[RMDB]
RNA sequence: GGGAACGACUCGAGUAGAGUCGAAAAAUACACCAGCAGUAGGACUCAGCGACCGUCACAACAAGGUUGUGCUGGUAUCCGACGGUCGUAUAGCCCUGUCUUGGAGGUUGCCUUGCACUGACGUGCCACACCAUUUACAGAUUCGUCUGUAAAUGAAUGGCCAUACUCUAUUCGUAGAGUAUGGCCAAAAAGAAACAACAACAACAAC
Reactivity to DMS in 0.01 (KOAc 150mM, MgCl2 10mM, bicine 150mM(pH8.5), 24C), signal-to-noise 1, nucleotides 027 to 156: a100u010a070c060a210c020c020a040g040c030a110g030u010a030g000g020a090c020u000c010a260g050c040g030a010c020c000g030u010c000a240c140a110a090c120a110a120g030g010u000u010g030u000g000c030u000g010g000u010a040u000c050c050g010a020c000g000g000u000c030g000u000a110u000a050g020c000c000c020u000g020u000c100u000u000g010g020a130g040g010u010u000g000c020c040u000u010g050c000a110c090u000g010a180c130g000u020g020c080c080a060c020a140c190c010a010u000u000u010a020c010a020g010a060u000u010c300g030u000c000u000g010u000a000a020a010u000g010a050a080
Reactivity to 2A3 in 0.01 (KOAc 150mM, MgCl2 10mM, bicine 150mM(pH8.5), 24C), signal-to-noise 2, nucleotides 027 to 156: a010u160a060c090a030c010c000a000g000c010a020g010u140a040g020g010a060c000u040c050a010g000c010g010a000c000c000g000u000c000a080c020a210a150c060a180a150g070g010u030u010g010u040g030c030u010g020g030u020a030u040c000c010g000a000c000g030g000u000c010g000u020a030u020a000g030c010c000c000u000g030u000c060u070u050g030g020a040g060g030u090u100g050c040c030u040u070g040c030a050c060u150g090a040c050g010u030g020c000c030a120c010a000c060c000a000u000u000u000a000c020a000g010a030u030u120c140g090u000c090u000g040u010a000a000a000u000g060a000a050
The record gives the reactivity of an RNA of 207 nucleotides to DMS and 2A3. DMS adducts were read by reverse transcription with MarathonRT.